Chemical mapping of a 177-nucleotide RNA with 2A3 and DMS. Source: RMDB library OK2TST, as collected in RNAgym. The reactions ran in a buffer of 150 mM KOAc, 10 mM MgCl2 and 150 mM bicine (pH 8.5), at 24 C. High DMS reactivity at an A or C suggests that its Watson-Crick edge is free. For DMS, 25,178 sequencing reads were counted.
[RMDB]
RNA sequence: GGGAACGACUCGAGUAGAGUCGAAAAGUGUGGGAUCCAUGCGAUGACAGUUGUAUGAGGCUGAGGCCCUGAUCUCCAGGUGUGCCGCAGAUCAAAGCACCCGCAUACCAGAGAAUUCCACGUAGCCACCAUGAAAUUUAUUCGUAAAUUUCAUGGUAAAAGAAACAACAACAACAAC
Reactivity to 2A3 in 0.01 (KOAc 150mM, MgCl2 10mM, bicine 150mM(pH8.5), 24C), signal-to-noise 6, nucleotides 027 to 126: g100u100g000u010g000g000g000a010u010c020c020a030u070g020c030g080a080u090g060a100c060a080g040u120u040g050u110a090u090g030a020g170g080c010u010g010a020g030g000c010c010c000u030g020a120u110c110u070c170c020a030g020g030u110g080u190g080c010c010g000c020a010g010a050u060c010a020a080a020g040c000a010c000c030c000g000c000a010u040a100c030c030a020g040a010g020a190a070u040u010c000c010a010c010g010u010a040g080c010c030
Reactivity to DMS in 0.01 (KOAc 150mM, MgCl2 10mM, bicine 150mM(pH8.5), 24C), signal-to-noise 9, nucleotides 027 to 126: g020u000g020u010g000g010g000a030u000c030c040a090u000g010c160g010a070u010g010a140c140a070g010u000u000g010u000a130u010g000a110g010g010c010u000g010a080g000g000c010c010c010u000g000a110u010c170u010c200c030a050g000g010u010g010u010g010c000c030g000c030a020g000a200u000c040a030a100a170g000c030a040c070c030c060g000c020a020u000a080c080c070a110g000a160g000a040a040u000u000c010c010a020c020g010u010a120g010c050c050